Structure probing data (2A3 and DMS) for a 177-nucleotide construct. Source: RMDB library TTRDEL, as collected in RNAgym. The RNA was probed in 150 mM KOAc, 10 mM MgCl2 and 150 mM bicine (pH 8.5) at 24 C. For 2A3 the reverse transcriptase was SuperScript II with manganese.
[RMDB]
RNA sequence: GGGAACGACUCGAGUAGAGUCGAAAAGAUAUGGAUAUAGGGAGCCUAGACAUCGGAAACGAUGUGUAGGCGAGGAUCUAUCAUCCUAAGUCAAAGCUCUAGUAAGGCUUCGGCCUUACUAGAGCAACGAUUACAUAGGGUUCGCCCUAUGUAAUCGAAAAGAAACAACAACAACAAC
Reactivity to 2A3 in 0.01 (KOAc 150mM, MgCl2 10mM, bicine 150mM(pH8.5), 24C), signal-to-noise 4, nucleotides 027 to 126: g010a010u080a030u180g010g000a010u020a000u000a030g030g000g000a010g020c000c000u040a040g030a090c000a010u000c010g020g050a090a050a060c020g000a010u000g000u040g200u010a010g000g000c050g000a020g000g010a000u000c010u010a000u030c070a010u000c050c010u030a220a030g060u050c060a130a090a040g000c000u000c000u000a010g000u000a000a000g010g000c010u030u160c300g140g000c010c000u000u000a000c000u000a000g000a000g000c000a000a000
Reactivity to DMS in 0.01 (KOAc 150mM, MgCl2 10mM, bicine 150mM(pH8.5), 24C), signal-to-noise 5, nucleotides 027 to 126: g000a040u000a300u000g010g000a010u000a020u000a010g000g000g010a050g030c000c000u000a000g000a000c010a000u000c000g010g010a140a090a150c010g020a020u000g020u000g000u000a000g000g010c010g000a010g010g000a020u010c000u000a010u000c220a010u000c000c000u000a070a140g010u000c040a100a090a140g000c000u000c000u000a000g010u000a010a010g010g010c000u000u020c200g020g000c000c000u000u000a000c000u000a000g000a010g020c000a000a010